[RMDB]
RNA sequence: GGGAACGACUCGAGUAGAGUCGAAAAAGCGAUGAUACGUCAUCGCAACGAUUGCCUGAUCGUAAAACAGGAGACGGCCGUGGCCGCGACCACGUAAAAAAGCGUAACGUGGUCUACGGACCAAGAAAAAAGCGCGGAACGUUCGCGUUCCGCGCAAGGUAGAAACGAAGUUCGCUUCGUUUCUACCAAAAGAAACAACAACAACAAC
Reactivity to 2A3 in 0.01 (KOAc 150mM, MgCl2 10mM, bicine 150mM(pH8.5), 24C), signal-to-noise 2, nucleotides 027 to 156: a000g000c010g000a000u010g010a010u030a080c160g070u010c030a000u000c000g000c000a000a010c010g000a010u020u020g010c010c010u020g010a030u020c040g110u190a020a020a020a000c000a020g000g020a010g020a050c150g010g000c000c000g010u000g010g000c010c010g000c000g020a060c040c070a010c020g020u040a050a170a090a140a060a000g000c010g000u020a050a020c010g010u000g010g010u010c060u080a010c020g010g010a100c000c010a030a050g110a030a100a000a000a010a000g000c010g010c000g000g020a020a000c020g030u080u080c220g000c010g120u000u010c000c000g000c000g000c000a000a000
An RNA of 207 nucleotides, treated with 2A3 and read out base by base. Conditions: 150 mM KOAc, 10 mM MgCl2 and 150 mM bicine (pH 8.5), 24 C.